[RMDB]
RNA sequence: GGGAACGACUCGAGUAGAGUCGAAAAGAAAGGCGCGCCUGACAUCUAAAUGGAGUUGCCGCGAGAAACUCUUAGGAAAUAAAACUGGGAGGAAAUCGCGGUCCGCCUGUAGGCAAGUACACAGAAAGGGUAUUCAUAUCUUCGGAUAUGAAUACCCAAAAGAAACAACAACAACAAC
Reactivity to 2A3 in 0.01 (KOAc 150mM, MgCl2 10mM, bicine 150mM(pH8.5), 24C), signal-to-noise 2, nucleotides 027 to 126: g050a010a110a000g010g000c060g000c050g000c000c000u010g010a050c010a080u120c050u190a030a080a160u150g080g000a020g000u110u110g020c000c000g050c020g030a010g070a050a120a000c000u000c020u060u030a000g020g150a240a160a160u110a050a170a030a030c000u000g020g020g020a030g000g040a100a140a030u000c000g010c010g000g030u000c000c000g030c000c010u030g060u030a030g010g000c010a010a070g010u090a030c000a000c010a090g060a130a050a000
Reactivity to DMS in 0.01 (KOAc 150mM, MgCl2 10mM, bicine 150mM(pH8.5), 24C), signal-to-noise 3, nucleotides 027 to 126: g000a000a110a050g030g000c040g010c300g000c000c000u020g000a070c100a080u020c050u040a040a070a090u010g030g010a150g010u010u030g020c000c000g010c000g000a000g000a190a090a190c000u000c010u000u000a020g000g030a120a030a100u050a100a110a070a150c000u010g040g000g000a010g020g000a030a030a180u000c010g040c000g000g000u010c200c010g030c030c000u020g010u010a020g000g000c070a080a080g000u090a040c120a050c060a030g000a060a070a050